[RMDB]
Structure probing data (2A3 and DMS) for a 177-nucleotide construct. DMS adducts were read by reverse transcription with MarathonRT. 2A3 is a SHAPE reagent: it acylates the 2'-hydroxyl of flexible nucleotides of all four kinds. Reactivities are rounded to 0.1 and cut off at 0 and 3.
RNA sequence: GGGAACGACUCGAGUAGAGUCGAAAACUGCGGUUGAUCGGCAAAUUCAGUGGUGAGCGCAGUAAGCUUAGCAAAGCCUCCGAUACUCACCUCGGUGAUCGCCGCCUCGGUGCCACCGGCAACCAUAGAUUCCUUCCGAUUUCGAUCGGAAGGAAUCAAAAGAAACAACAACAACAAC
Reactivity to 2A3 in 0.01 (KOAc 150mM, MgCl2 10mM, bicine 150mM(pH8.5), 24C), signal-to-noise 3, nucleotides 027 to 126: c020u010g020c030g050g030u250u300g030a020u010c020g100g020c130a130a160a240u270u120c040a130g030u020g050g000u010g000a020g030c000g040c030a010g010u020a020a010g000c000u040u060a050g110c100a150a050a010g000c000c000u050c010c020g020a020u020a110c000u000c020a000c000c040u000c030g040g020u090g030a020u060c010g000c010c000g000c000c000u060c070g040g000u070g050c050c030a190c120c000g010g030c020a050a110c020c000a010u020a060
Reactivity to DMS in 0.01 (KOAc 150mM, MgCl2 10mM, bicine 150mM(pH8.5), 24C), signal-to-noise 2, nucleotides 027 to 126: c030u000g030c010g010g010u010u010g020a010u000c020g040g010c160a090a090a110u020u000c110a160g010u000g020g000u000g020a010g030c110g000c110a260g000u020a090a120g020c000u000u000a210g030c280a080a050a050g030c020c010u020c120c020g010a160u020a010c010u000c020a010c000c000u000c020g020g000u010g010a050u000c070g000c030c000g000c120c100u000c050g030g000u000g000c150c100a100c070c050g010g000c060a020a060c030c030a140u000a070